[RMDB]
RNA sequence: GGGAACGACUCGAGUAGAGUCGAAAAGUGGUGCGCGGAGAGGGUAACCACCGGCGCGCGUCACUGAUAUAUCCACCGGGGGGUAUGGGGAGAAAAGGAUACAGCGCGACGAAGUUAGCACGCUGCCGAAAUGUACCCACAUUCGUGUGGGUACAAAGUAUGCCGUAUCUUUCGAGAUACGGCAUACAAAAGAAACAACAACAACAAC
Reactivity to 2A3 in 0.01 (KOAc 150mM, MgCl2 10mM, bicine 150mM(pH8.5), 24C), signal-to-noise 1, nucleotides 027 to 156: g000u000g000g010u020g020c010g000c000g080g090a150g040a180g130g030g020u080a100a090c040c020a070c040c030g060g030c000g020c000g010c000g000u000c010a020c000u000g010a000u090a010u010a020u050c090c040a060c110c070g000g000g000g010g020g000u120a040u100g000g000g040g000a070g030a000a090a000a000g010g000a020u050a050c010a000g030c000g010c000g050a040c040g030a100a010g050u130u160a030g030c050a030c050g030c000u000g060c070c000g080a110a070a010u060g000u000a000c000c040c000a000c000a010u010u070c200g050u020g000u000g040g040g000u000a000c000a000a000a020
Reactivity to DMS in 0.01 (KOAc 150mM, MgCl2 10mM, bicine 150mM(pH8.5), 24C), signal-to-noise 1, nucleotides 027 to 156: g080u010g000g020u000g010c000g020c030g010g000a220g030a130g000g020g030u000a070a100c170c140a070c030c000g090g000c000g060c020g020c000g030u000c010a020c010u010g010a140u010a090u000a130u000c050c060a060c060c010g030g000g090g010g030g020u020a050u000g010g020g000g010a100g000a030a070a080a080g050g020a140u000a040c020a020g000c030g010c000g010a220c020g040a100a070g020u000u010a070g080c020a070c000g000c000u000g010c060c070g000a040a090a090u000g000u010a000c000c000c000a020c000a060u010u010c300g030u000g020u010g010g000g030u000a000c010a000a010a120

An RNA of 207 nucleotides, treated with 2A3 and DMS and read out base by base. For 2A3 the reverse transcriptase was SuperScript II with manganese. For DMS, 2,377 sequencing reads were counted. The 2A3 profile rests on 782 reads. The RNA was probed in 150 mM KOAc, 10 mM MgCl2 and 150 mM bicine (pH 8.5) at 24 C. For DMS the reverse transcriptase was MarathonRT.